[RMDB]
RNA sequence: GGGAACGACUCGAGUAGAGUCGAAAACGAGGACGAGUUGCCGGCCGGUGUCAACGAGCUGGUGCGUGUGUAUGUGGCUCAGAAACGCAAGAUCUCCGACGGUGACAAGCUGGCCGGCCGGCACGGCGAUAGGAUCCUGUUUCGACAGGAUCCUAUCAAAAGAAACAACAACAACAAC
Reactivity to DMS in 0.01 (KOAc 150mM, MgCl2 10mM, bicine 150mM(pH8.5), 24C), signal-to-noise 4, nucleotides 027 to 126: c080g010a090g000g000a130c120g010a160g010u010u000g040c000c000g000g020c000c010g010g010u000g000u010c070a040a090c050g010a130g000c040u020g020g020u010g010c060g020u000g010u010g020u020a100u010g010u010g010g000c110u000c070a080g000a080a110a040c030g000c020a060a100g000a120u000c040u010c020c030g000a110c040g010g000u000g000a060c060a110a110g010c140u000g010g020c000c000g010g010c010c000g000g010c020a010c030g000g000c180
Reactivity to 2A3 in 0.01 (KOAc 150mM, MgCl2 10mM, bicine 150mM(pH8.5), 24C), signal-to-noise 1, nucleotides 027 to 126: c050g030a130g080g090a050c070g000a050g180u200u040g010c000c000g000g000c000c000g040g000u060g030u020c030a050a030c050g040a020g020c030u130g010g070u080g030c030g020u160g050u020g010u030a050u100g090u090g100g060c050u050c080a060g060a030a110a010c030g010c050a050a010g030a190u040c010u000c030c010g070a080c050g000g050u030g000a010c010a080a020g070c080u020g040g000c000c030g000g000c000c000g000g000c020a000c010g010g000c070

The record gives the reactivity of an RNA of 177 nucleotides to DMS and 2A3. The 2A3 profile rests on 1,955 reads. For DMS the reverse transcriptase was MarathonRT. Source: RMDB library OK2TRN, as collected in RNAgym. The DMS profile rests on 5,013 reads.